[RMDB]
RNA sequence: GGGAACGACUCGAGUAGAGUCGAAAAGACCUUAACUUCGGUUAAGGUCAAAGAGCACUGAGCUGCGAAAGAAACGCUGCAAGCCGCAGUGCACGGCAAUAAAAAGGGUGUUCUUCGGAACACCCAACAUUAUGUUCAUCUUCGGAUGAACAUAAUGAAAAGAAACAACAACAACAAC
Reactivity to 2A3 in 0.01 (KOAc 150mM, MgCl2 10mM, bicine 150mM(pH8.5), 24C), signal-to-noise 3, nucleotides 027 to 126: g000a000c000c000u000u000a010a000c000u030u060c160g070g000u000u000a000a000g000g000u000c010a010a000a000g000a010g000c020a000c100u180g060a020g020c000u020g000c030g050a040a180a090g170a050a160a010c050g020c060u090g000c040a090a060g020c010c020g090c030a010g010u000g020c000a010c020g040g000c040a070a050u150a200a140a050a060a060g000g010g000u000g010u000u000c000u010u040c200g070g000a000a000c000a000c000c000c000a000a000
Reactivity to DMS in 0.01 (KOAc 150mM, MgCl2 10mM, bicine 150mM(pH8.5), 24C), signal-to-noise 7, nucleotides 027 to 126: g000a020c000c000u000u010a010a000c000u000u010c190g030g010u000u010a000a010g010g000u000c010a010a050a070g010a110g020c010a030c010u000g000a280g010c000u000g000c000g010a070a090a110g010a120a100a120c170g020c080u010g000c030a120a100g020c020c030g020c010a030g000u000g010c010a160c060g000g000c070a080a060u010a040a040a080a110a090g000g010g020u000g000u000u000c000u000u010c180g020g000a020a000c000a000c000c000c010a000a010

Chemical mapping of a 177-nucleotide RNA with 2A3 and DMS. For 2A3, 16,735 sequencing reads were counted. The DMS profile rests on 11,283 reads. Source: RMDB library M2PK50, as collected in RNAgym.